[RMDB]
RNA sequence: GGGAACGACUCGAGUAGAGUCGAAAAAGAAACCAAAAAGAUAGAAGUUUGUAGUUGAAGUACUUCAUCAUCUGCACGACCUUCUCCGCUGGCAUGUCGGCGGAGAUCGCACAUACCUUCCUUUCCAGCAACGGAAUCACUGUGAGGAAGGUGUCCAGUGAUAAUCGAGAUUCGUCUCGAUUAUCACAAAAGAAACAACAACAACAAC
Reactivity to DMS in 0.01 (KOAc 150mM, MgCl2 10mM, bicine 150mM(pH8.5), 24C), signal-to-noise 2, nucleotides 027 to 156: a100g050a070a060a260c050c040a060a150a070a120a090g000a070u000a020g020a090a040g010u000u020u000g010u050a130g030u000u010g010a040a210g050u000a070c120u000u020c020a100u010c040a070u000c030u000g020c020a110c040g010a100c030c040u020u000c020u000c000c000g100c020u010g000g050c220a110u000g000u000c000g010g040c010g020g000a020g010a010u000c020g000c090a030c110a150u000a020c000c010u000u020c010c000u000u010u000c300c050a090g000c050a020a300c130g000g000a060a220u000c110a030c020u010g020u000g000a030g000g000a070a020g110g020u000g000u000c010c030a210
Reactivity to 2A3 in 0.01 (KOAc 150mM, MgCl2 10mM, bicine 150mM(pH8.5), 24C), signal-to-noise 4, nucleotides 027 to 156: a000g040a030a000a000c020c020a020a030a020a040a010g080a040u140a050g050a080a040g020u080u140u160g090u160a190g030u020u070g050a070a010g090u070a050c040u080u030c010a040u010c000a030u020c030u080g040c080a010c120g080a110c020c020u030u010c000u010c000c000g000c000u020g050g000c120a180u220g160u300c020g000g000c000g000g010a000g000a000u010c020g010c010a050c000a080u120a060c000c000u000u000c010c000u020u040u060c090c040a010g020c050a100a110c130g120g110a110a040u120c030a020c030u040g010u040g040a000g000g000a000a000g010g010u000g000u000c020c040a030
Source: RMDB library OK3TST, as collected in RNAgym. The record gives the reactivity of an RNA of 207 nucleotides to DMS and 2A3. Conditions: 150 mM KOAc, 10 mM MgCl2 and 150 mM bicine (pH 8.5), 24 C. For 2A3 the reverse transcriptase was SuperScript II with manganese.